An RNA of 177 nucleotides, treated with 2A3 and DMS and read out base by base.
RNA sequence: GGGAACGACUCGAGUAGAGUCGAAAAUUGAGCUAAAAAUAUAGCCUUACCUUGAAUCAAUCCCGAGGUCGUGCAAGGGUUUUGUUAUCAGCUUUCAAACUAAGAGUCAGGUUGGGAAUUUGGGCUAAUAGGUGAAUGAAUUCGUUCAUUCACCUAUAAAAGAAACAACAACAACAAC
Reactivity to 2A3 in 0.01 (KOAc 150mM, MgCl2 10mM, bicine 150mM(pH8.5), 24C), signal-to-noise 2, nucleotides 027 to 126: u040u070g000a020g030c010u110a020a080a070a240a130u250a100u060a120g040c000c000u000u010a030c000c000u000u020g080a060a040u090c020a020a060u020c020c030c020g010a060g020g050u060c070g010u050g020c000a010a030g000g000g000u040u060u050u040g020u010u000a120u130c020a040g040c020u110u190u110c090a040a140a090c020u130a130a010g010a020g090u050c000a010g050g010u080u060g010g050g000a020a070u080u070u080g020g010g000c000u010a020
Reactivity to DMS in 0.01 (KOAc 150mM, MgCl2 10mM, bicine 150mM(pH8.5), 24C), signal-to-noise 5, nucleotides 027 to 126: u010u010g010a100g010c040u010a020a070a100a120a100u010a140u000a060g010c010c010u010u010a060c040c020u000u000g010a070a090u010c060a080a180u010c050c010c010g010a120g010g000u010c110g020u000g010c100a060a110g000g000g010u000u000u010u000g010u010u000a070u010c100a050g010c070u000u000u020c080a040a050a100c090u000a100a100g000a060g010u000c060a040g000g000u000u000g010g000g000a070a110u000u000u000g010g020g010c050u000a060

The DMS profile rests on 4,490 reads. The reactions ran in a buffer of 150 mM KOAc, 10 mM MgCl2 and 150 mM bicine (pH 8.5), at 24 C.